[RMDB]
RNA sequence: GGGAACGACUCGAGUAGAGUCGAAAAGAGCGAUUAGACAAAGGGGUAGAGCUACAUAUUAGAUAGCUGUAUAAUCGGUCAAGUUACAUCAAAACAUCUUCAAUAUUUAUUACUUACUUUCCUUUCUGCCAGAGUACGGUAUUCGUACCGUACUCAAUAAUACAAAAAGCUUCGGCUUUUUGUAUUAAAAAGAAACAACAACAACAAC
Reactivity to DMS in 0.01 (KOAc 150mM, MgCl2 10mM, bicine 150mM(pH8.5), 24C), signal-to-noise 1, nucleotides 027 to 156: g010a070g000c050g020a050u000u000a080g030a100c040a060a050a060g010g020g000g020u000a040g000a100g000c020u010a020c050a170u000a160u000u010a160g040a120u000a040g020c000u000g020u010a050u020a110a040u000c010g020g020u000c040a100a110g010u020u020a000c040a040u000c030a050a030a110a040c030a080u000c040u000u000c020a060a130u010a020u010u030u010a070u030u000a050c010u000u000a080c050u000u000u000c010c020u000u010u000c020u000g000c010c080a220g010a040g000u000a010c020g010g030u000a030u000u020c260g030u010a010c000c010g020u000a010c020u000c000a010a020
Reactivity to 2A3 in 0.01 (KOAc 150mM, MgCl2 10mM, bicine 150mM(pH8.5), 24C), signal-to-noise 2, nucleotides 027 to 156: g030a030g020c010g000a010u010u060a020g030a090c040a040a050a050g000g080g000g000u030a040g000a000g090c020u010a020c070a050u260a250u190u100a050g070a140u030a000g000c000u020g010u080a080u030a110a050u030c020g070g010u040c060a010a030g030u050u140a070c030a050u130c030a050a120a120a010c010a070u070c050u240u100c090a070a190u100a110u220u200u140a110u080u050a040c020u040u020a010c020u030u040u030c000c000u030u040u070c040u060g080c030c050a040g000a000g000u000a000c000g010g000u000a010u010u050c040g010u000a020c000c000g000u000a000c000u000c000a000a000
Structure probing data (DMS and 2A3) for a 207-nucleotide construct. DMS adducts were read by reverse transcription with MarathonRT. 2A3 adducts were read by reverse transcription with SuperScript II with manganese. The reactions ran in a buffer of 150 mM KOAc, 10 mM MgCl2 and 150 mM bicine (pH 8.5), at 24 C. Values cover nucleotides 27 to 156.